[RMDB]
RNA sequence: GGGAACGACUCGAGUAGAGUCGAAAAGAUAUGGAUACGCGAGAGCUUGGAUUUAAGGGUCCAUCGGAAACGAUGGAGCCCUUUGUCAGCUCUCAUCCUAAGUCAAACAGACGCUUCGGCGUCUGAACCAAUAGUGAUCCUUCGGGAUCACUAUUGGAAAAGAAACAACAACAACAAC
Reactivity to DMS in 0.01 (KOAc 150mM, MgCl2 10mM, bicine 150mM(pH8.5), 24C), signal-to-noise 3, nucleotides 027 to 126: g010a040u000a300u010g010g010a020u010a050c270g030c260g010a010g000a000g000c010u000u010g020g010a050u000u000u000a010a010g020g010g010u000c000c010a000u010c000g010g010a120a090a170c000g010a000u000g000g000a060g010c000c000c000u000u020u010g000u000c000a020g000c000u000c000u000c000a030u000c000c010u010a090a140g000u010c020a150a100a300c010a020g010a010c000g020c000u010u020c250g040g010c000g010u000c010u000g000a060a200
Reactivity to 2A3 in 0.01 (KOAc 150mM, MgCl2 10mM, bicine 150mM(pH8.5), 24C), signal-to-noise 3, nucleotides 027 to 126: g010a020u070a020u200g030g000a050u100a120c190g070c180g200a010g010a010g020c040u230u280g160g020a080u300u300u150a010a010g030g000g000u030c020c000a020u000c010g020g030a090a070a040c000g000a000u000g020g000a040g050c000c000c000u010u010u010g000u000c000a000g000c000u000c000u000c000a000u000c000c000u050a180a030g030u050c020a060a080a150c000a030g000a010c010g000c000u090u090c300g170g010c000g000u000c000u010g000a010a040